The record gives the reactivity of an RNA of 207 nucleotides to 2A3 and DMS. Conditions: 150 mM KOAc, 10 mM MgCl2 and 150 mM bicine (pH 8.5), 24 C. 2A3 adducts were read by reverse transcription with SuperScript II with manganese. For DMS, 8,630 sequencing reads were counted. For DMS the reverse transcriptase was MarathonRT.
RNA sequence: GGGAACGACUCGAGUAGAGUCGAAAAGCUAUGGUGCAACUCUUUAAGGCAAUAACGAACUAAUUUUAAGCAAGUAAUGGAGAAAUGCCAGGGUCACUAUCUAGCCAUAAUAGUGCUUGACAGUAUGAGAAUCUGCUACCCUUCGGGGUAGCAGAAACUAUAAUCAACGGUUCGCCGUUGAUUAUAGAAAAGAAACAACAACAACAAC
Reactivity to 2A3 in 0.01 (KOAc 150mM, MgCl2 10mM, bicine 150mM(pH8.5), 24C), signal-to-noise 5, nucleotides 027 to 156: g040c030u030a020u080g020g010u020g020c060a100a070c030u040c000u050u180u140a100a080g030g000c040a070a110u140a130a040c040g090a040a020c040u060a110a230u100u120u150u120a100a030g030c070a050a020g030u100a100a120u130g070g020a050g040a110a080a020u050g030c010c000a020g010g010g010u050c000a000c010u020a040u080c020u030a010g030c010c000a020u060a140a080u070a090g100u050g050c020u040u040g040a050c020a060g090u110a070u130g080a060g050a080a100u030c000u010g000c000u000a000c010c010c000u010u040c190g070g010g000g000u000a000g000c000a000g000a000a000a000
Reactivity to DMS in 0.01 (KOAc 150mM, MgCl2 10mM, bicine 150mM(pH8.5), 24C), signal-to-noise 4, nucleotides 027 to 156: g020c030u000a040u010g020g030u010g000c030a090a080c030u010c010u000u010u010a060a090g020g020c020a100a080u010a070a140c060g010a110a110c050u020a060a100u010u010u010u010a030a170g000c070a030a210g000u000a060a080u020g010g010a160g010a080a110a050u000g030c000c010a080g020g010g010u000c030a040c020u000a020u000c030u000a100g000c050c040a070u010a050a100u010a090g010u010g000c020u000u000g010a150c050a060g010u000a110u010g010a160g020a110a160u000c000u000g020c010u000a010c000c000c010u000u000c300g040g020g020g040u010a000g020c000a000g010a000a020a070